[RMDB]
RNA sequence: GGGAACGACUCGAGUAGAGUCGAAAAGUACAUGAGCAACAGAAAUAGGGAUUAAUUAAUAUUACACAAAUUGCACACGGGACAAUGCAUUUCGUUAUGCGUUAAUUGGACAGGCGGUUAAGGCUUGCUAUUUAGUGCUCUUCGGAGCACUAAAUAGAAAAGAAACAACAACAACAAC
Reactivity to DMS in 0.01 (KOAc 150mM, MgCl2 10mM, bicine 150mM(pH8.5), 24C), signal-to-noise 4, nucleotides 027 to 126: g020u000a080c060a080u010g010a070g020c030a060a070c040a080g000a040a080a110u010a090g000g000g010a100u010u010a070a060u000u000a050a090u020a100u010u010a070c070a090c070a050a060a080u010u000g010c010a040c080a050c090g000g000g000a050c090a050a050u000g000c010a040u000u010u010c230g000u010u000a030u000g000c060g010u000u000a050a070u010u010g000g000a110c050a040g010g010c030g000g000u000u000a070a120g020g010c030u000u010g010
Reactivity to 2A3 in 0.01 (KOAc 150mM, MgCl2 10mM, bicine 150mM(pH8.5), 24C), signal-to-noise 3, nucleotides 027 to 126: g020u050a010c020a100u070g010a000g030c010a010a060c040a040g090a030a110a040u090a080g000g000g050a030u090u030a050a020u070u110a080a090u160a080u250u250a030c040a010c010a050a150a050u080u100g000c020a030c000a010c060g000g020g070a000c070a020a070u070g000c000a000u020u030u070c070g110u190u060a010u090g000c010g020u030u060a080a070u140u040g030g000a030c020a030g040g020c000g000g030u060u120a040a020g030g020c020u010u050g030
Chemical mapping of a 177-nucleotide RNA with DMS and 2A3.
For 2A3 the reverse transcriptase was SuperScript II with manganese.
Reactivities are rounded to 0.1 and cut off at 0 and 3.
The RNA was probed in 150 mM KOAc, 10 mM MgCl2 and 150 mM bicine (pH 8.5) at 24 C.
The DMS profile rests on 4,099 reads.